The record gives the reactivity of an RNA of 177 nucleotides to 2A3 and DMS. The DMS profile rests on 19,105 reads. The RNA was probed in 150 mM KOAc, 10 mM MgCl2 and 150 mM bicine (pH 8.5) at 24 C. 2A3 adducts were read by reverse transcription with SuperScript II with manganese. Reactivities are rounded to 0.1 and cut off at 0 and 3.
RNA sequence: GGGAACGACUCGAGUAGAGUCGAAAAAUGUCAGUUGCGGCUCAUCGUCUGGCACUUUGCUUGUUAAUAUCGCUAGCUGCCUAGCGAAGGGCAACAAAUGACAGAAACAUUGGCUUCGGCCAAUGAACAUGAGAAAUAUCUUCGGAUAUUUCUCAUGAAAAGAAACAACAACAACAAC
Reactivity to 2A3 in 0.01 (KOAc 150mM, MgCl2 10mM, bicine 150mM(pH8.5), 24C), signal-to-noise 8, nucleotides 027 to 126: a000u040g000u000c000a010g010u020u010g020c010g020g000c010u000c010a030u010c010g120u050c030u010g000g030c010a020c020u190u180u140g010c020u090u090g080u200u160a280a150u160a100u300c060g000c020u000a010g010c080u010g000c010c020u040a000g000c010g010a020a030g000g000g000c000a000a010c000a000a040a020u020g010a010c000a000g070a030a090a000c000a010u000u000g010g010c000u030u050c250g080g000c000c000a000a000u010g000a010a010
Reactivity to DMS in 0.01 (KOAc 150mM, MgCl2 10mM, bicine 150mM(pH8.5), 24C), signal-to-noise 9, nucleotides 027 to 126: a090u000g010u010c000a020g020u000u000g010c300g000g000c010u000c010a090u000c010g010u000c040u000g010g000c010a030c070u010u000u000g010c020u000u000g010u010u010a130a150u010a090u010c230g000c010u000a020g000c250u000g010c020c000u000a140g000c010g010a010a030g010g000g000c010a020a030c010a010a020a030u000g000a010c010a030g010a150a090a180c010a010u000u000g000g000c000u000u010c180g020g010c010c000a000a000u000g000a090a200